Structure probing data (DMS and 2A3) for a 177-nucleotide construct.
[RMDB]
RNA sequence: GGGAACGACUCGAGUAGAGUCGAAAAGAUAUGGAUGGAGAUCCCUGGACGCACUAUAUCGGAAACGAUAUAAACGUCCCUGGAUCGUUGAAAUCCUAAGUCAAAUCACACGGUUCGCCGUGUGAAAGAAUUGGAUUAGGUUCGCCUAAUCCAAUUCAAAAGAAACAACAACAACAAC
Reactivity to DMS in 0.01 (KOAc 150mM, MgCl2 10mM, bicine 150mM(pH8.5), 24C), signal-to-noise 5, nucleotides 027 to 126: g010a040u000a300u010g000g000a010u000g000g000a110g020a010u000c000c000c030u000g000g010a010c000g020c080a120c180u000a000u000a000u000c000g000g000a150a080a170c010g010a000u000a010u000a020a090a140c000g000u000c000c000c020u000g000g010a010u000c000g010u000u010g000a100a110a020u000c000c000u010a070a120g000u000c050a090a110a170u000c000a000c000a000c000g000g000u000u000c210g020c010c000g010u000g010u000g000a000a050a070
Reactivity to 2A3 in 0.01 (KOAc 150mM, MgCl2 10mM, bicine 150mM(pH8.5), 24C), signal-to-noise 3, nucleotides 027 to 126: g030a020u070a030u160g000g010a000u010g000g020a030g000a020u000c020c000c000u030g000g010a000c000g020c020a060c130u010a000u000a000u010c000g030g020a070a060a020c020g000a010u000a000u010a010a100a010c000g000u000c000c000c010u020g000g000a000u000c010g020u060u030g010a030a010a000u010c000c000u020a140a000g060u040c030a020a060a120u030c000a010c000a000c000g000g090u060u080c300g040c090c010g010u010g000u010g000a020a030a010
It was measured as part of the RMDB library TTRDEL. The RNA was probed in 150 mM KOAc, 10 mM MgCl2 and 150 mM bicine (pH 8.5) at 24 C. The 2A3 profile rests on 11,833 reads. Values cover nucleotides 27 to 126.